[RMDB]
RNA sequence: GGGAACGACUCGAGUAGAGUCGAAAAAGCGAACAGAAGACCACCAGACGCGAUAGGAGUAAGACCAUAGCGAUGGGAGGAGAUGCUAGGAGUUAGAGGAGGCCGAAGCGAGGAGGAAAGCAAAGAAGUUUAUUCUAGUCUUCGGACUAGAAUAAACAAAAGAAACAACAACAACAAC
Reactivity to DMS in 0.01 (KOAc 150mM, MgCl2 10mM, bicine 150mM(pH8.5), 24C), signal-to-noise 2, nucleotides 027 to 126: a100g020c050g020a040a060c080a140g030a090a110g020a080c060c020a190c040c040a020g000a110c020g010c050g010a080u020a070g010g000a060g000u010a080a070g000a100c080c030a040u000a090g030c020g000a140u000g000g000g000a070g010g000a080g030a040u010g010c020u000a100g010g000a040g010u020u010a070g020a050g000g030a090g010g000c050c040g000a040a090g020c090g030a020g000g010a070g010g020a040a050a050g000c120a030a050a110g030a070a070
Reactivity to 2A3 in 0.01 (KOAc 150mM, MgCl2 10mM, bicine 150mM(pH8.5), 24C), signal-to-noise 1, nucleotides 027 to 126: a000g010c020g030a020a000c020a070g110a160a000g040a080c010c030a030c000c020a020g110a130c030g040c050g030a080u150a160g070g020a040g030u090a020a080g100a120c020c020a030u080a030g020c000g050a050u060g010g000g010a080g020g050a040g010a030u100g030c010u070a060g060g050a030g030u090u030a040g020a000g090g000a020g000g000c000c010g010a030a010g040c040g010a020g010g010a000g010g000a090a000a030g000c070a000a060a060g090a050a000